The record gives the reactivity of an RNA of 207 nucleotides to DMS and 2A3. The reactions ran in a buffer of 150 mM KOAc, 10 mM MgCl2 and 150 mM bicine (pH 8.5), at 24 C. The 2A3 profile rests on 2,537 reads. It was measured as part of the RMDB library M2RFOK.

[RMDB]
RNA sequence: GGGAACGACUCGAGUAGAGUCGAAAACGCAAAGCUGCAGCGCGGCGCUCUGGAGGCCUUGCCCCGCGCACUGCUCUUUACAUGGCCCGACGGGAGGGCACUUCGCGGGCAGUGCUGCGGCCUCGUGAAACUGCCCCUAAGUUCGCUUAGGGGCAAAUGUAUUAGAGUUGUUCGCAACUCUAAUACAAAAAGAAACAACAACAACAAC
Reactivity to DMS in 0.01 (KOAc 150mM, MgCl2 10mM, bicine 150mM(pH8.5), 24C), signal-to-noise 1, nucleotides 027 to 156: c020g000c000a030a030a050g000c000u010g000c030a020g010c010g030c020g000g050c080g030c090u000c030u000g030g040a190g000g000c030c060u000u000g000c060c000c030c020g000c060g030c090a050c090u000g000c010u020c090u010u000u000a120c060a070u000g000g030c050c050c060g010a270c050g050g000g060a150g000g010g010c000a020c000u000u010c000g030c220g020g000g090c010a080g010u000g030c000u000g040c010g010g000c030c010u010c050g030u010g010a120a060a070c080u000g000c000c010c000c000u010a010a060g000u000u000c280g030c010u000u000a050g010g020g010g060c000a000a000a020
Reactivity to 2A3 in 0.01 (KOAc 150mM, MgCl2 10mM, bicine 150mM(pH8.5), 24C), signal-to-noise 3, nucleotides 027 to 156: c020g000c040a050a040a010g000c010u030g000c010a010g060c040g010c010g170g080c050g020c050u000c040u100g070g010a030g010g020c000c030u080u160g070c040c030c000c000g030c000g000c050a050c040u060g010c000u000c030u110u250u100a150c080a130u150g080g000c030c030c020g050a100c040g010g000g000a050g000g020g000c060a160c020u040u040c020g000c110g040g000g000c010a010g010u000g000c020u020g000c010g000g020c000c000u010c010g010u030g010a070a050a020c040u060g000c000c000c000c000u010a010a000g010u030u080c160g060c140u000u000a000g000g000g000g000c000a000a000a000
The DMS profile rests on 2,891 reads. DMS adducts were read by reverse transcription with MarathonRT. Values cover nucleotides 27 to 156.